[RMDB]
RNA sequence: GGGAACGACUCGAGUAGAGUCGAAAAGGCAGGCGUAGACGUCGCCCACCGGGUCGACCAGGCAGACCACCCGGCCCGCGCCGCACAUGUUCAGGCCGGGCAGCGCGGAACCGAAGGCGGACAGGUACACUAGGGCACCGUUCGCGGUGCCCUAGUGAAAAGAAACAACAACAACAAC
Reactivity to DMS in 0.01 (KOAc 150mM, MgCl2 10mM, bicine 150mM(pH8.5), 24C), signal-to-noise 1, nucleotides 027 to 126: g000g110c060a060g090g030c050g020u020a060g030a120c130g090u000c060g000c010c010c010a130c210c000g060g010g000u020c060g040a050c040c050a060g070g020c090a110g000a180c110c090a140c030c050c010g070g000c090c000c000g030c130g000c000c090g050c100a050c150a030u000g040u000u000c070a120g000g000c000c030g010g000g000c030a000g000c060g030c000g010g000a060a060c000c030g010a120a060g010g000c010g000g000a040c090a100g010g000u010a080